[RMDB]
The record gives the reactivity of an RNA of 177 nucleotides to 2A3 and DMS.
The 2A3 profile rests on 2,952 reads.
The reactions ran in a buffer of 150 mM KOAc, 10 mM MgCl2 and 150 mM bicine (pH 8.5), at 24 C.
For DMS the reverse transcriptase was MarathonRT.

RNA sequence: GGGAACGACUCGAGUAGAGUCGAAAACGCCGGUGCUGCCAGAUGUGUAGAUCAGCAACGCCAACGGGUCAGCAGAGUCAUCGGCCACGGGGAUCGGCGUAGCUGGCAGCGUCUUGCCGCGACCGAAGUAUCGCAUAUCGUUCGCGAUAUGCGAUACAAAAGAAACAACAACAACAAC
Reactivity to 2A3 in 0.01 (KOAc 150mM, MgCl2 10mM, bicine 150mM(pH8.5), 24C), signal-to-noise 1, nucleotides 027 to 126: c040g020c040c000g010g000u030g000c020u000g000c000c030a000g000a020u010g040u010g020u120a070g020a300u080c020a000g060c030a020a010c000g000c000c000a020a020c030g000g010g030u030c020a030g030c060a050g090a030g300u210c040a080u090c120g010g000c000c030a190c040g070g000g030g080a100u120c110g000g000c000g000u000a030g010c010u000g010g000c010a020g020c000g000u030c000u000u050g000c000c010g000c030g080a020c000c020g010a130a020
Reactivity to DMS in 0.01 (KOAc 150mM, MgCl2 10mM, bicine 150mM(pH8.5), 24C), signal-to-noise 2, nucleotides 027 to 126: c100g020c110c020g010g000u000g030c000u000g000c000c020a070g010a020u010g010u000g010u000a060g030a140u000c000a050g020c020a110a170c070g000c010c010a070a140c070g020g020g000u000c010a110g000c110a170g000a080g010u020c070a110u000c080g010g020c000c020a090c100g000g010g000g030a050u000c150g010g040c020g010u000a060g030c010u020g010g000c020a100g000c000g010u000c010u000u010g010c010c030g000c020g010a080c020c010g030a140a120